[RMDB]
RNA sequence: GGGAACGACUCGAGUAGAGUCGAAAAAAAUUAACACAGAAGCAUUGGCGGGCCAAGGUACAGAUGAAGGCAAUCAACUAGGGAUGAUGGUUCCAGGAGGUGAUACCGGUGACGCAACCAAGUUGGCCUACGUAUCCAUGUUCGCAUGGAUACGUAGAAAAGAAACAACAACAACAAC
Reactivity to 2A3 in 0.01 (KOAc 150mM, MgCl2 10mM, bicine 150mM(pH8.5), 24C), signal-to-noise 1, nucleotides 027 to 126: a000a000a000u220u110a090a020c060a000c010a040g090a080a010g020c040a060u000u140g040g020c030g000g000g000c010c020a050a050g030g000u050a070c030a050g060a040u040g040a110a000g050g000c020a020a050u070c010a000a060c040u060a050g000g050g040a040u060g040a040u090g060g030u060u040c010c020a040g020g020a020g000g050u050g010a020u030a060c010c000g000g020u030g000a020c030g000c050a030a000c020c000a040a020g020u050u030g060g000c000
Reactivity to DMS in 0.01 (KOAc 150mM, MgCl2 10mM, bicine 150mM(pH8.5), 24C), signal-to-noise 4, nucleotides 027 to 126: a040a050a080u020u000a060a070c090a080c120a040g000a110a050g010c050a100u010u010g010g000c080g000g010g000c050c050a060a030g000g020u000a070c100a070g010a090u000g020a090a080g010g000c090a090a040u000c060a030a040c050u010a050g000g000g000a060u000g010a090u000g020g020u010u010c020c020a090g020g010a090g010g010u000g010a090u010a070c060c040g000g000u000g000a080c080g000c050a060a090c030c030a030a090g020u000u000g020g020c110
About this RNA:
Chemical mapping of a 177-nucleotide RNA with 2A3 and DMS. The DMS profile rests on 3,745 reads. Source: RMDB library OK2TST, as collected in RNAgym.